This 177-nucleotide RNA was probed chemically with DMS. The DMS profile rests on 1,114 reads. DMS adducts were read by reverse transcription with MarathonRT.
[RMDB]
RNA sequence: GGGAACGACUCGAGUAGAGUCGAAAAGAUAUGGAUGAGACUAGAGCGCGCGUACGAUGAGACCCCAUAUCGGAAACGAUAUGAACUCUCAUCGUACGCGAACUACGCUCUAAUCUCAUCCUAAGUCGUUCAAGACUAUCUUCGGAUAGUCUUGAACAAAAGAAACAACAACAACAAC
Reactivity to DMS in 0.01 (KOAc 150mM, MgCl2 10mM, bicine 150mM(pH8.5), 24C), signal-to-noise 2, nucleotides 027 to 126: g010a120u030a300u010g000g010a000u000g010a040g010a010c020u000a010g010a000g000c010g020c010g010c010g010u000a000c020g040a040u000g000a000g030a030c260c180c210c030a010u010a000u010c000g030g000a120a060a230c010g000a010u000a020u000g000a080a070c300u010c000u000c010a010u000c010g010u000a000c010g050c010g040a010a020c220u010a300c040g000c000u000c000u000a010a020u000c000u030c000a010u000c000c010u000a010a150g000u000c080